[RMDB]
Notes:
The record gives the reactivity of an RNA of 177 nucleotides to 2A3 and DMS. Values cover nucleotides 27 to 126. For 2A3, 41,866 sequencing reads were counted.
RNA sequence: GGGAACGACUCGAGUAGAGUCGAAAACUUCUUCUAGGGCGAACUGGGAUACGCCCACUUAUGAGCUGAUAAGGGCCCCCGUAUGCCAGGAGUCAGAGGCAUGGCGGCAGGUCUCUGGGCUCGCCGGUCUGUGAGUUCCUUUCGAGGAGCUCGCGGGAAAAGAAACAACAACAACAAC
Reactivity to 2A3 in 0.01 (KOAc 150mM, MgCl2 10mM, bicine 150mM(pH8.5), 24C), signal-to-noise 9, nucleotides 027 to 126: c010u060u050c010u130u040c070u190a140g030g010g000c030g040a130a070c100u130g060g060g040a040u070a120c020g020c010c070c000a020c000u110u120a090u240g060a030g040c040u040g080a160u120a180a090g020g000g000c020c000c000c000c000g010u020a010u030g030c000c000a030g040g070a070g120u130c060a030g030a060g110g010c010a020u030g120g010c020g010g020c020a030g000g030u010c030u000c010u070g020g020g020c010u000c010g020c010c020g040g050
Reactivity to DMS in 0.01 (KOAc 150mM, MgCl2 10mM, bicine 150mM(pH8.5), 24C), signal-to-noise 9, nucleotides 027 to 126: c140u010u010c040u010u020c080u020a120g010g000g020c020g010a110a100c100u030g010g010g010a120u040a100c060g010c010c010c010a050c090u020u030a070u020g000a040g020c040u000g010a110u030a100a080g010g000g010c020c010c300c030c010g010u000a020u000g000c000c010a080g000g010a150g010u030c170a090g000a120g000g000c010a020u000g010g020c060g010g000c250a150g000g000u000c000u010c020u010g010g000g000c020u000c010g010c110c070g010g000